[RMDB]
RNA sequence: GGGAACGACUCGAGUAGAGUCGAAAACAUCACCAGUAUCACGCCGAUAAGCCCGCCGUGGAAGGACAUGCCGCCGUCCCAGACGCGGAAUAAAUAGAGCGGGUUAUCCAGAAACAGAGGGAAGUUACAUUACUACGUGCUUCGGCACGUAGUAAUGAAAAGAAACAACAACAACAAC
Reactivity to 2A3 in 0.01 (KOAc 150mM, MgCl2 10mM, bicine 150mM(pH8.5), 24C), signal-to-noise 4, nucleotides 027 to 126: c010a060u110c010a040c070c010a000g010u030a050u160c040a010c070g050c050c000g010a010u020a080a060g080c000c000c000g000c000c000g010u010g000g050a060a030g060g020a020c020a040u100g050c020c010g020c020c010g010u020c030c040c000a040g030a020c010g000c010g030g050a040a080u120a060a040a010u180a020g180a030g010c010g020g000g000u000u020a000u020c000c020a020g020a060a140a040c030a010g050a060g040g050g000a060a020g050u060u070a010
Reactivity to DMS in 0.01 (KOAc 150mM, MgCl2 10mM, bicine 150mM(pH8.5), 24C), signal-to-noise 4, nucleotides 027 to 126: c060a120u030c070a120c040c010a050g020u010a110u010c040a080c120g010c040c080g000a040u030a090a110g010c000c000c030g040c000c040g030u030g000g010a190a170g030g000a040c090a050u020g020c020c030g030c040c070g000u020c030c020c040a180g020a230c060g010c040g000g030a050a030u040a040a040a090u020a080g000a090g060c000g020g000g000u000u010a010u020c020c040a070g030a080a070a040c120a060g000a100g010g000g000a050a070g020u000u040a130
Conditions: 150 mM KOAc, 10 mM MgCl2 and 150 mM bicine (pH 8.5), 24 C. This 177-nucleotide RNA was probed chemically with 2A3 and DMS. It was measured as part of the RMDB library OK1LIB.